[RMDB]
RNA sequence: GGGAACGACUCGAGUAGAGUCGAAAAUUAAUUUGACUCAACGCGAGGAAACUUACCAGGGCCAAGUAUUGUGUAGAAACGAGCAAUACAGGAGUGGUGCAUGGUCGUUGGAAAUUGAUGGGAUGACCCCUACGAGAGAGUUCGCUCUCUCGUAGGGAAAAGAAACAACAACAACAAC
Reactivity to DMS in 0.01 (KOAc 150mM, MgCl2 10mM, bicine 150mM(pH8.5), 24C), signal-to-noise 1, nucleotides 027 to 126: u000u050a160a030u020u000u020g010a050c010u010c000a050a040c020g000c000g130a020g000g040a000a100a090c180u000u000a170c100c000a080g000g060g020c010c020a070a130g000u000a080u000u000g020u000g000u080a180g050a090a030a060c300g000a250g000c030a030a000u000a010c020a060g020g000a140g040u000g000g000u040g000c100a110u000g000g000u040c050g000u000u000g000g000a000a010a040u040u000g030a130u040g030g020g000a020u120g000a300c170
Reactivity to 2A3 in 0.01 (KOAc 150mM, MgCl2 10mM, bicine 150mM(pH8.5), 24C), signal-to-noise 3, nucleotides 027 to 126: u150u130a000a090u040u020u050g030a040c000u000c040a040a000c000g000c010g060a040g000g070a080a060a000c050u100u150a040c040c000a020g000g000g000c030c050a100a070g010u000a030u020u060g010u020g070u150a090g200a060a160a030c090g010a010g030c020a000a030u010a040c040a010g030g040a040g090u070g000g060u050g050c020a070u110g090g000u060c020g000u010u000g050g000a090a080a180u140u150g040a120u080g050g010g000a050u100g040a050c000